[RMDB]
RNA sequence: GGGAACGACUCGAGUAGAGUCGAAAAUACUUAGUACGCGCGUAAUUGCAGGCAUUCCGGGUGCAGCAACUGACGCGGAAGACUUUUCCCAGAGUGUGCGCUUCAACUGGCGUGCUGAGUAGUGCACGAAUUGCACGUACGUUCGCGUACGUGCAAAUGAUUACAUGUUGUUCGCAACAUGUAAUCAAAAAGAAACAACAACAACAAC
Reactivity to DMS in 0.01 (KOAc 150mM, MgCl2 10mM, bicine 150mM(pH8.5), 24C), signal-to-noise 4, nucleotides 027 to 156: u010a040c050u000u000a070g010u000a060c020g020c000g030c040g060u000a050a050u000u000g030c000a140g010g010c010a050u000u010c020c300g040g020g110u000g000c020a300g000c020a020a040c030u010g000a030c050g010c010g010g000a080a130g030a130c120u010u000u000u000c000c000c010a250g010a130g020u000g010u010g000c030g000c020u000u000c070a080a160c090u010g020g050c030g010u000g000c000u000g020a050g010u000a060g030u000g020c020a060c030g000a100a180u000u000g010c010a010c000g000u000a020c010g030u000u000c300g030c020g040u000a000c000g010u000g000c010a000a000a040
Reactivity to 2A3 in 0.01 (KOAc 150mM, MgCl2 10mM, bicine 150mM(pH8.5), 24C), signal-to-noise 9, nucleotides 027 to 156: u080a000c000u000u000a000g010u010a010c000g000c000g000c010g030u020a040a050u030u020g010c040a100g120g030c010a030u110u090c130c190g240g040g000u010g010c010a020g000c010a020a030c070u140g040a020c020g000c030g010g020a010a020g210a130c040u140u130u060u020c000c000c000a000g010a010g010u120g000u000g000c010g000c010u020u060c110a300a300c110u040g020g000c010g010u010g000c000u000g000a000g010u040a010g000u020g010c010a000c030g030a070a110u050u020g000c000a000c000g010u000a000c000g010u010u050c160g000c010g100u000a000c000g000u000g000c000a000a000a000
Conditions: 150 mM KOAc, 10 mM MgCl2 and 150 mM bicine (pH 8.5), 24 C.
This 207-nucleotide RNA was probed chemically with DMS and 2A3.
DMS adducts were read by reverse transcription with MarathonRT.
2A3 adducts were read by reverse transcription with SuperScript II with manganese.
It was measured as part of the RMDB library M2RFOK.